The record gives the reactivity of an RNA of 177 nucleotides to DMS and 2A3. Values cover nucleotides 27 to 126.

RNA sequence: GGGAACGACUCGAGUAGAGUCGAAAAGGAUCCUUACCAGUCAGUAAGGUAACUUUGUCAUGUAAAGUUACUAGAGACUGGACCUAAUGUCAUUUACCUUACUGAUGACAUUGUAUAGUAAGGAUCGCUACUUCAUAGUAUUCGUACUGUGAAGUAGAAAAGAAACAACAACAACAAC
Reactivity to DMS in 0.01 (KOAc 150mM, MgCl2 10mM, bicine 150mM(pH8.5), 24C), signal-to-noise 9, nucleotides 027 to 126: g010g000a000u000c000c000u000u000a080c000c020a060g010u000c000a030g010u010a230a120g000g000u000a000a010c050u000u000u000g010u010c300a130u010g010u010a020a020a010g000u000u000a020c090u000a130g000a140g000a010c010u000g000g000a100c170c090u000a020a010u000g000u000c000a010u000u000u000a070c120c130u000u010a070c160u000g000a010u000g000a020c020a010u000u000g010u000a080u010a110g010u000a010a010g010g000a010u000c000g010
Reactivity to 2A3 in 0.01 (KOAc 150mM, MgCl2 10mM, bicine 150mM(pH8.5), 24C), signal-to-noise 9, nucleotides 027 to 126: g030g000a000u000c000c000u000u010a050c020c010a000g010u010c000a020g060u100a140a030g020g000u000a000a000c020u030u020u040g080u110c090a090u130g100u210a000a000a010g000u000u010a030c030u040a030g010a010g010a090c000u010g000g010a000c000c010u050a010a010u000g000u000c010a000u010u020u100a100c030c030u100u130a090c070u100g010a010u000g010a000c010a030u020u030g040u030a160u030a040g070u020a000a000g000g000a000u000c000g000

2A3 adducts were read by reverse transcription with SuperScript II with manganese.
For DMS the reverse transcriptase was MarathonRT.